The record gives the reactivity of an RNA of 177 nucleotides to 2A3 and DMS. Conditions: 150 mM KOAc, 10 mM MgCl2 and 150 mM bicine (pH 8.5), 24 C. Values cover nucleotides 27 to 126. The data come from the RNA Mapping Database (RMDB), library OK1LIB.
[RMDB]
RNA sequence: GGGAACGACUCGAGUAGAGUCGAAAAACUGCGGUAACCGCGGCCUUCUGCCCGAUGACCCGCUUGCCCAGCUCGUCUUCCAUGCGCAGCAGCUUGGCGGUCUCGCCUUCCAGCAGCCGACCGGCCGAUCCGGCUCAAUGUUCGCAUUGAGCCGGAUAAAAGAAACAACAACAACAAC
Reactivity to 2A3 in 0.01 (KOAc 150mM, MgCl2 10mM, bicine 150mM(pH8.5), 24C), signal-to-noise 3, nucleotides 027 to 126: a000c070u110g000c030g040g000u110a150a060c040c010g020c050g010g000c020c000u150u160c110u140g040c020c000c040g010a020u070g070a040c020c000c000g030c000u020u080g040c010c000c010a010g020c000u050c010g080u000c040u140u080c030c020a070u130g040c060g040c040a080g000c000a000g000c000u030u180g020g000c040g000g000u050c010u020c080g000c000c000u080u070c030c010a010g020c010a010g010c000c000g030a050c000c000g020g030c000c010g010
Reactivity to DMS in 0.01 (KOAc 150mM, MgCl2 10mM, bicine 150mM(pH8.5), 24C), signal-to-noise 1, nucleotides 027 to 126: a110c070u000g030c050g020g010u000a150a050c040c030g010c130g000g000c100c090u070u010c080u060g020c020c030c000g010a040u050g010a140c120c050c090g000c010u000u000g020c010c000c100a050g000c000u000c030g020u010c060u020u000c010c050a090u050g060c020g000c120a070g000c050a030g020c050u040u000g000g010c000g010g020u000c030u010c040g040c070c000u000u000c130c020a090g000c020a080g000c010c020g060a120c060c040g000g040c040c010g000